Conditions: 150 mM KOAc, 10 mM MgCl2 and 150 mM bicine (pH 8.5), 24 C. The record gives the reactivity of an RNA of 177 nucleotides to DMS and 2A3. Reactivities are rounded to 0.1 and cut off at 0 and 3.

RNA sequence: GGGAACGACUCGAGUAGAGUCGAAAACGACAAAGCCCAGCAGAUCACGGUUGUCGAAAAACCGGAAGCCGUGCACUUCGUCGACAACGGUCACCGCAUCGCCCAUCGACUUGAGAAUGCGGCCAGCGACUAACUAUACAUUCGUGUAUAGUUAGUCAAAAGAAACAACAACAACAAC
Reactivity to DMS in 0.01 (KOAc 150mM, MgCl2 10mM, bicine 150mM(pH8.5), 24C), signal-to-noise 9, nucleotides 027 to 126: c070g010a070c080a070a090a130g010c040c010c020a140g010c120a080g010a100u000c060a090c020g010g010u000u000g010u000c110g000a050a080a040a080a070c140c040g010g010a090a090g000c020c030g020u000g010c150a090c040u000u000c140g010u000c020g010a060c080a060a080c060g000g000u000c090a140c070c040g000c050a030u000c090g000c030c020c040a090u000c100g010a070c110u000u010g010a070g000a080a040u000g010c020g010g010c070c090a090g010c170
Reactivity to 2A3 in 0.01 (KOAc 150mM, MgCl2 10mM, bicine 150mM(pH8.5), 24C), signal-to-noise 9, nucleotides 027 to 126: c040g060a010c060a040a090a030g030c010c010c010a010g030c030a010g030a100u080c030a010c070g030g010u040u030g070u090c030g070a140a040a020a050a030c050c000g040g010a010a000g000c020c020g050u040g020c020a020c050u080u070c040g030u000c010g020a030c020a080a030c040g040g030u070c060a050c180c030g010c020a020u030c050g060c010c020c000a070u090c040g110a110c010u040u060g020a020g030a100a030u060g020c010g020g020c020c010a040g030c030